RNA sequence: GGGAACGACUCGAGUAGAGUCGAAAAUGUGGGCUUUAUUAAUGAAAACAAACAUACAUACUAUGCCACAGUUAACGUGACACGAAUUUACGUUGCACCUUAUGGAAUUUACCCAAUUAAGCAUAAUUAUGUGUUUAUAAGCGACACAUCUACAUUCCAUCCGUAUGAGAUUCGUCUCAUACGGAUGAAAAGAAACAACAACAACAAC
Reactivity to 2A3 in 0.01 (KOAc 150mM, MgCl2 10mM, bicine 150mM(pH8.5), 24C), signal-to-noise 8, nucleotides 027 to 156: u040g010u000g010g030g010c020u070u080u140a080u100u130a150a120u210g120a090a090a030a030c090a030a100a000c040a030u160a040c010a010u090a030c030u050a040u070g010c020c020a080c030a030g010u040u090a040a000c020g000u000g090a030c010a010c160g090a150a140u070u100u160a030c020g010u020u060g010c040a030c020c020u100u090a080u110g030g060a030a040u120u160u170a140c000c020c000a040a100u150u100a070a000g000c010a020u010a060a040u180u050a020u050g030u000g020u000u010u050a130u030a030a010g030c020g140a040c020a000c000a020u050c060u150a130c040a160u080u100c070
Reactivity to DMS in 0.01 (KOAc 150mM, MgCl2 10mM, bicine 150mM(pH8.5), 24C), signal-to-noise 2, nucleotides 027 to 156: u010g010u010g000g020g020c030u000u030u000a130u020u000a210a170u030g010a130a070a080a170c070a070a070a050c040a040u010a030c080a120u000a090c090u000a110u000g020c000c040a010c070a160g040u000u000a040a110c110g010u010g000a050c070a300c120g020a150a090u000u000u020a020c060g000u000u000g010c090a110c050c000u000u000a100u000g000g000a060a100u000u000u000a070c040c020c020a070a080u010u000a050a100g000c020a020u010a030a060u000u000a060u000g010u000g020u000u000u000a080u000a110a150g020c030g010a070c000a010c010a000u000c010u010a080c070a250u010u000c030

Chemical mapping of a 207-nucleotide RNA with 2A3 and DMS. The reactions ran in a buffer of 150 mM KOAc, 10 mM MgCl2 and 150 mM bicine (pH 8.5), at 24 C.